[RMDB]
RNA sequence: GGGAACGACUCGAGUAGAGUCGAAAAGUCUUCGCGAAAUCGACGGCAGCCUCAGCAGCUCUGCGUGGGUGUGUGCCCCGCUGCUGCUCGCAGUAUCCGCGCUGGCGUGCACCGCUGUGGGCUGAAACGCCGCAUAGGGCUUCGGCCCUAUGCGGCGAAAAGAAACAACAACAACAAC
Reactivity to 2A3 in 0.01 (KOAc 150mM, MgCl2 10mM, bicine 150mM(pH8.5), 24C), signal-to-noise 1, nucleotides 027 to 126: g020u000c020u060u050c030g000c010g160a040a140a110u130c060g020a000c000g000g020c020a010g080c000c000u080c040a100g000c000a000g000c050u100c040u300g020c010g040u250g030g030g000u140g010u030g090u160g010c010c000c040c000g000c040u050g000c010u000g040c000u000c010g170c000a110g000u040a000u000c100c000g010c010g050c140u010g040g000c000g000u030g010c010a050c130c020g000c020u010g050u100g000g000g000c000u000g000a020a040a010